[RMDB]
RNA sequence: GGGAACGACUCGAGUAGAGUCGAAAAAAAAUUUGAGCGGCAAUGAAUCUCAAAAUGAGCGGCAGCUAAAUGAAUCGAAACCAGAUUCCCAUUUUGAUGAAACCGCUCUUUCGCACGAAGACCAGCAAGUUUUAGGAUUAUUCGUAAUCCUAAAACUAAAAGAAACAACAACAACAAC
Reactivity to DMS in 0.01 (KOAc 150mM, MgCl2 10mM, bicine 150mM(pH8.5), 24C), signal-to-noise 5, nucleotides 027 to 126: a060a070a040a080u000u000u000g020a040g020c030g020g010c110a060a090u000g000a170a080u000c040u000c010a030a020a020a010u000g010a060g030c150g010g020c300a030g000c050u000a030a060a060u020g000a080a020u000c010g010a080a090a090c270c130a130g000a060u000u000c020c220c000a080u000u000u000u000g000a010u000g000a060a120a100c000c010g010c000u000c000u000u000u000c070g000c090a070c110g010a050a080g010a160c050c050a080g000c130a080
Reactivity to 2A3 in 0.01 (KOAc 150mM, MgCl2 10mM, bicine 150mM(pH8.5), 24C), signal-to-noise 1, nucleotides 027 to 126: a000a140a000a050u040u010u010g000a030g000c030g090g010c090a000a140u120g120a090a070u000c000u000c000a050a060a030a010u040g010a020g000c010g180g070c070a020g070c070u150a220a190a110u130g000a010a000u020c090g040a160a000a050c090c040a040g010a090u030u020c010c000c000a000u000u010u000u050g040a080u040g000a090a010a030c000c000g000c000u020c020u020u030u020c030g030c000a030c030g070a110a000g020a030c020c000a020g030c050a150
This 177-nucleotide RNA was probed chemically with DMS and 2A3. For 2A3, 1,172 sequencing reads were counted. 2A3 adducts were read by reverse transcription with SuperScript II with manganese. The DMS profile rests on 4,336 reads. Source: RMDB library OK2TRN, as collected in RNAgym.